RNA sequence: GGGAACGACUCGAGUAGAGUCGAAAAUUAAAGAGUUUCCAUUAACAAAACCAGUAAUUGCGAUCGGGAAUACAACCUCCCAUCUUGGUUGACUUAAAGGUUCCAUAGGAACCUGGAAGCUAAAAAAGUAAUAAAGGAUCUUCGGAUCCUUUAUUACAAAAGAAACAACAACAACAAC
Reactivity to DMS in 0.01 (KOAc 150mM, MgCl2 10mM, bicine 150mM(pH8.5), 24C), signal-to-noise 1, nucleotides 027 to 126: u010u030a070a120a140g000a110g000u000u000u010c000c000a300u000u000a030a040c020a010a210a000a000c000c000a040g000u010a060a140u000u000g070c240g000a010u000c210g040g000g000a060a040u010a060c270a050a190c250c080u000c000c020c030a040u000c010u000u000g000g000u000u000g000a270c300u000u000a040a060a050g010g000u000u000c000c040a100u000a210g050g030a010a000c010c010u000g010g010a000a000g010c010u030a000a020a130a080a060a100

The record gives the reactivity of an RNA of 177 nucleotides to DMS.
The data come from the RNA Mapping Database (RMDB), library M2PK90.
Reactivities are given for positions 27 through 126.
The DMS profile rests on 539 reads.
The RNA was probed in 150 mM KOAc, 10 mM MgCl2 and 150 mM bicine (pH 8.5) at 24 C.